[RMDB]
RNA sequence: GGGAACGACUCGAGUAGAGUCGAAAAAACACUGUGUAGGAUAGGUGGGAGGCUUUGAAGUGUGCACGCCAGUCUGCAUGGAGCCGACCUUGAAAUACCACCCUUUAAUGAAGAAAAACAAAGCCAAUCCAUAACAUCGUUUCGACGAUGUUAUGGAAAAAGAAACAACAACAACAAC
Reactivity to DMS in 0.01 (KOAc 150mM, MgCl2 10mM, bicine 150mM(pH8.5), 24C), signal-to-noise 2, nucleotides 027 to 126: a080a040c070a050c060u000g000u010g060u000a040g000g000a100u000a030g020g010u000g000g000g020a150g030g010c000u000u000u020g030a100a060g020u010g040u000g020c070a060c050g000c060c060a100g010u000c060u020g010c020a020u000g020g010a050g040c010c010g000a080c090c030u010u000g000a050a050a070u000a060c030c020a040c020c020c050u000u000u000a060a060u010g000a080a150g020a010a060a010a040a080c090a040a060a060g000c060c070a080a100
Reactivity to 2A3 in 0.01 (KOAc 150mM, MgCl2 10mM, bicine 150mM(pH8.5), 24C), signal-to-noise 1, nucleotides 027 to 126: a000a000c080a030c070u090g000u010g050u080a020g030g020a040u010a070g000g060u020g050g000g040a090g040g000c020u050u160u040g080a120a040g050u060g020u060g030c010a020c040g040c050c030a040g020u060c010u000g000c020a000u040g080g000a000g020c000c000g000a060c020c000u000u060g050a040a010a000u020a000c020c010a020c000c030c050u110u100u100a190a150u190g050a120a120g060a050a170a000a000a000c030a030a040a000g050c040c010a030a050

Overview: This 177-nucleotide RNA was probed chemically with DMS and 2A3. For 2A3 the reverse transcriptase was SuperScript II with manganese. For 2A3, 1,107 sequencing reads were counted. Values cover nucleotides 27 to 126.